Chemical mapping of a 177-nucleotide RNA with 2A3 and DMS. It was measured as part of the RMDB library OK2TRN. In probing experiments dimethyl sulfate is read out at A N1 and C N3, which are open when not base-paired. The RNA was probed in 150 mM KOAc, 10 mM MgCl2 and 150 mM bicine (pH 8.5) at 24 C.
[RMDB]
RNA sequence: GGGAACGACUCGAGUAGAGUCGAAAAGCGGGUGUGGUUGCUAUGCCCGAUGGUUGGAUCGUUACCGUGAUCGGCCAUGACAAUGAGGCGAUCGCCUACGGUCAUUGCUUCGAUAAUCUUACCGAUAGCUAUGAUUUUCGUUCGCGAAAAUCAUAGCAAAAGAAACAACAACAACAAC
Reactivity to 2A3 in 0.01 (KOAc 150mM, MgCl2 10mM, bicine 150mM(pH8.5), 24C), signal-to-noise 1, nucleotides 027 to 126: g030c020g000g000g030u050g000u030g030g090u110u110g120c050u030a040u000g030c000c000c020g000a050u060g040g000u050u100g190g000a010u000c080g040u090u150a110c060c000g030u070g040a030u020c000g000g040c020c000a030u000g030a000c040a060a130u170g020a030g030g020c050g060a180u150c110g020c030c030u080a070c060g000g000u010c000a020u000u070g000c010u040u040c030g050a040u130a180a040u070c030u040u100a080c060c040g010a070u040a080
Reactivity to DMS in 0.01 (KOAc 150mM, MgCl2 10mM, bicine 150mM(pH8.5), 24C), signal-to-noise 2, nucleotides 027 to 126: g020c020g010g000g050u010g070u000g010g020u010u010g010c050u010a080u000g010c000c010c010g030a020u010g000g000u000u010g010g020a030u000c110g020u010u020a140c190c170g010u000g010a020u010c030g010g000c040c020a070u000g020a070c140a090a040u000g010a130g010g020c030g000a050u010c130g010c010c010u010a110c130g000g000u000c070a020u000u000g000c000u000u010c030g010a070u000a060a070u000c050u000u000a080c080c020g020a100u000a110
As a SHAPE reagent, 2A3 marks flexible, mostly unpaired nucleotides at the ribose 2'-OH.
For DMS the reverse transcriptase was MarathonRT.